[RMDB]
RNA sequence: GGGAACGACUCGAGUAGAGUCGAAAAAGAGAGAAGGCAAGAAUCGGACGAUUUCCCCAUGACGCUGGAGACAUCCUGGAAGGGGAAAGAGGAGGGUGGAAGAAAAAGGGGUGGGCCCCCCCGAUCCAAGGAUACUGCUUCGGCAGUAUCAAAAGAAACAACAACAACAAC
Reactivity to DMS in 0.01 (KOAc 150mM, MgCl2 10mM, bicine 150mM(pH8.5), 24C), signal-to-noise 5, nucleotides 027 to 129: a060g030a000g010a040g000a060a030g010g020c080a040a020g040a030a060u050c110g030g010a050c120g010a070u000u000u070c000c000c000c000a000u050g030a100c200g020c040u050g000g040a060g030a100c240a000u010c030c060u000g030g040a020a020g000g010g050g040a030a020a050g030a070g040g010a100g030g000g030u060g010g010a090a000g070a070a080a000a070a130g000g000g000g000u040g010g010g020c000c000c000c000c000c000c000g020a060u070c010c060a050a080g000
Reactivity to 2A3 in 0.01 (KOAc 150mM, MgCl2 10mM, bicine 150mM(pH8.5), 24C), signal-to-noise 7, nucleotides 027 to 129: a000g080a000g020a000g010a050a020g020g000c030a030a010g020a060a080u080c060g010g030a030c040g040a040u010u010u040c000c000c000c000a080u120g050a040c050g010c110u040g010g000a010g010a020c030a100u030c000c020u050g010g040a020a030g030g000g000g000a050a030a010g060a050g030g010a030g000g010g050u150g030g030a070a040g040a060a080a030a020a000g040g010g010g000u180g020g000g000c000c000c000c000c000c010c000g020a030u040c040c010a040a020g070
An RNA of 170 nucleotides, treated with DMS and 2A3 and read out base by base. Values cover nucleotides 27 to 129. Conditions: 150 mM KOAc, 10 mM MgCl2 and 150 mM bicine (pH 8.5), 24 C. Source: RMDB library 15KLIB, as collected in RNAgym. The 2A3 profile rests on 18,441 reads.